[RMDB]
Structure probing data (2A3) for a 177-nucleotide construct.
RNA sequence: GGGAACGACUCGAGUAGAGUCGAAAAACUCAUGGAUAUCUACGGAUAUCCAUGAGAAUGCAGUGAUGAUUCCAUAGACUAGAGUCUCUGAUAACAACAUGAAGAUCUACACAUUUCUCUGAGCAAACUAACGGGCGUGUUUCGACACGCCCGUUAGAAAAGAAACAACAACAACAAC
Reactivity to 2A3 in 0.01 (KOAc 150mM, MgCl2 10mM, bicine 150mM(pH8.5), 24C), signal-to-noise 1, nucleotides 027 to 126: a000c000u000c000a020u000g010g000a000u000a000u000c040u050a070c190g010g000a000u000a000u010c000c000a000u000g000a000g000a000a000u050g000c030a030g030u080g120a040u000g000a000u060u000c000c080a040u040a040g080a050c110u000a140g000a020g150u050c050u000c000u090g090a080u040a300a060c120a070a080c050a180u260g000a080a010g020a120u000c000u000a020c000a010c020a080u120u100u000c100u000c020u000g150a100g010c070a000a000a300

Source: RMDB library RFM100, as collected in RNAgym.